Source: RMDB library OK3TST, as collected in RNAgym. Chemical mapping of a 207-nucleotide RNA with 2A3 and DMS. For 2A3, 1,015 sequencing reads were counted. The RNA was probed in 150 mM KOAc, 10 mM MgCl2 and 150 mM bicine (pH 8.5) at 24 C.
RNA sequence: GGGAACGACUCGAGUAGAGUCGAAAAUUUCAGACCAAUGAUGUACGCCGCAUAGAGUUCAUUGAUAGCUUCCUCACCUAGAUAAAGAGCAGAUAGCAUAUACUCGUGUUUUUCCAAUUCAGUAUAAACUAUACGGAAAUCACCAGUUACAACCAACCUAAGGGUCUAAGUUCGCUUAGACCCUUAGAAAAGAAACAACAACAACAAC
Reactivity to 2A3 in 0.01 (KOAc 150mM, MgCl2 10mM, bicine 150mM(pH8.5), 24C), signal-to-noise 2, nucleotides 027 to 156: u050u070u090c020a000g010a000c000c050a000a050u070g000a020u030g040u080a010c040g040c020c000g000c050a050u110a060g080a000g060u020u010c040a030u100u070g060a050u120a030g010c000u030u030c000c000u030c000a020c020c010u010a010g010a060u060a080a120a010g050a020g000c030a030g040a040u060a010g010c010a000u050a000u030a090c000u000c000g000u010g010u000u170u000u000u000c030c010a050a080u080u060c020a030g050u010a050u110a180a300a110c020u020a040u020a090c050g020g010a000a000a000u040c000a000c040c010a000g010u110u130a010c020a040a100c140c010a020a020c000
Reactivity to DMS in 0.01 (KOAc 150mM, MgCl2 10mM, bicine 150mM(pH8.5), 24C), signal-to-noise 2, nucleotides 027 to 156: u020u000u020c040a110g020a180c030c030a120a100u000g010a070u000g020u000a050c060g030c030c020g000c080a100u000a080g020a110g040u010u010c050a080u030u010g010a110u000a070g000c020u000u000c040c020u010c040a090c120c010u010a070g020a140u020a060a060a100g000a120g020c020a050g010a120u000a060g010c030a120u010a140u010a040c010u000c090g000u010g010u000u000u000u000u000c030c020a040a120u000u000c080a040g010u000a080u000a050a130a120c080u000a120u000a060c060g000g010a050a060a040u000c060a020c020c030a120g000u000u000a090c080a060a110c030c010a070a220c120